[RMDB]
RNA sequence: GGGAACGACUCGAGUAGAGUCGAAAAUGAAAUGUCAGUUUUGGGGGGUUAUCUAGGGGAGGAGUUUUUCGGGAAGGGAACAUUUGAGAGGCGGUUCUUCAGAGAUGAGAAAGAGCUACAGGAUUACAUACGAAAAGGAUUUCGAUCCUUUUCGUAUAAAAGAAACAACAACAACAAC
Reactivity to DMS in 0.01 (KOAc 150mM, MgCl2 10mM, bicine 150mM(pH8.5), 24C), signal-to-noise 1, nucleotides 027 to 126: u000g000a080a090a070u000g010u000c110a120g010u000u000u000u000g000g020g000g020g030g000u010u000a030u000c140u010a100g000g040g010g020a080g020g000a020g010u000u010u000u020u040c050g010g000g010a100a090g030g000g000a090a030c050a060u000u020u000g010a160g000a130g010g040c030g020g000u000u040c050u010u010c060a020g000a140g000a100u000g010a050g000a060a030a050g000a040g020c060u000a050c090a090g020g020a090u020u010a060c170